Record summary: The record gives the reactivity of an RNA of 177 nucleotides to 2A3 and DMS. The 2A3 profile rests on 873 reads. Conditions: 150 mM KOAc, 10 mM MgCl2 and 150 mM bicine (pH 8.5), 24 C. Values cover nucleotides 27 to 126.
RNA sequence: GGGAACGACUCGAGUAGAGUCGAAAAGUUCAUCCUGGACAAAAUAUUAUGAUGAUUUUAUGGUUAAAAAAGGUUGCAAGAAGCUUUCUGAAGAAGAAUUCAAUAUUUUGUAUGAAUCUGCUGAUUGUAGUAGGAGAUAAUUCGUUAUCUCCUACUAAAAAGAAACAACAACAACAAC
Reactivity to 2A3 in 0.01 (KOAc 150mM, MgCl2 10mM, bicine 150mM(pH8.5), 24C), signal-to-noise 1, nucleotides 027 to 126: g040u030u090c000a050u030c050c020u030g040g010a010c010a010a050a020a060u120a070u130u160a140u100g030a030u010g010a000u000u040u030u040a070u180g020g060u130u130a160a060a000a060a140a000g000g000u050u050g000c030a060a120g080a110a010g150c010u000u070u050c000u000g070a080a020g010a060a000g050a120a010u080u000c000a020a010u000a060u060u040u020u000g020u000a100u100g000a040a080u000c000u100g040c030u050g180a220u190u170g140
Reactivity to DMS in 0.01 (KOAc 150mM, MgCl2 10mM, bicine 150mM(pH8.5), 24C), signal-to-noise 5, nucleotides 027 to 126: g010u010u010c080a080u000c060c030u000g010g010a050c010a030a040a030a040u000a020u000u000a110u010g010a060u000g000a190u010u000u000u000a080u020g010g010u000u010a000a040a100a110a050a070g000g010u000u010g010c120a080a120g000a100a110g010c030u000u000u000c020u000g010a080a090g000a060a030g000a110a080u000u000c060a030a030u000a020u000u000u000u010g000u000a070u000g010a080a060u000c070u000g010c090u010g010a150u000u000g010